[RMDB]
Chemical mapping of a 207-nucleotide RNA with DMS and 2A3. The data come from the RNA Mapping Database (RMDB), library PDB130. The DMS profile rests on 3,938 reads. For DMS the reverse transcriptase was MarathonRT. 2A3 adducts were read by reverse transcription with SuperScript II with manganese. The 2A3 profile rests on 2,525 reads. The reactions ran in a buffer of 150 mM KOAc, 10 mM MgCl2 and 150 mM bicine (pH 8.5), at 24 C.
RNA sequence: GGGAACGACUCGAGUAGAGUCGAAAAGCGGAAGCGAAGGCGGCGGCCGGGGACGUGUCCGUUGAUCAAGGACGAAGGCCGGAGGAUCAAAGAUGAUUAGAUACCGUCGUAGUUCCGGCAGUAAACGAUGCCGACGGGGCGAGGCCAGGGGGCUGUGCUAUCAACUAUACUUCGGUAUAGUUGAUAGAAAAGAAACAACAACAACAAC
Reactivity to DMS in 0.01 (KOAc 150mM, MgCl2 10mM, bicine 150mM(pH8.5), 24C), signal-to-noise 2, nucleotides 027 to 156: g010c030g010g010a120a050g000c060g020a090a120g000g010c020g020g040c040g000g010c040c020g000g020g010g010a070c060g000u000g020u000c000c010g030u000u000g020a160u020c130a080a190g010g000a090c010g000a090a120g050g010c020c040g000g000a110g000g030a100u010c050a060a120a150g010a120u000g010a100u010u000a140g010a180u010a040c030c000g020u010c040g000u000a160g000u000u000c000c010g020g000c030a060g010u030a050a060a140c100g000a150u000g000c060c010g030a070c060g020g030g000g040c070g010a080g030g000c060c040a060g020g000g010g040g010c020u000g000u000g010
Reactivity to 2A3 in 0.01 (KOAc 150mM, MgCl2 10mM, bicine 150mM(pH8.5), 24C), signal-to-noise 3, nucleotides 027 to 156: g020c020g020g040a060a010g060c010g040a010a020g030g010c010g000g010c010g020g000c030c020g000g020g000g030a020c030g040u060g020u060c020c040g030u030u140g060a160u160c080a090a090g020g010a020c020g080a070a060g050g030c000c030g000g020a020g030g000a030u030c040a030a080a070g080a110u160g000a020u060u110a060g060a120u130a110c030c000g040u050c040g010u010a010g030u020u060c030c000g000g020c010a010g000u170a010a080a030c060g040a060u100g020c020c000g000a030c010g000g010g010g020c050g010a030g000g000c010c050a040g010g000g000g010g000c040u050g030u060g040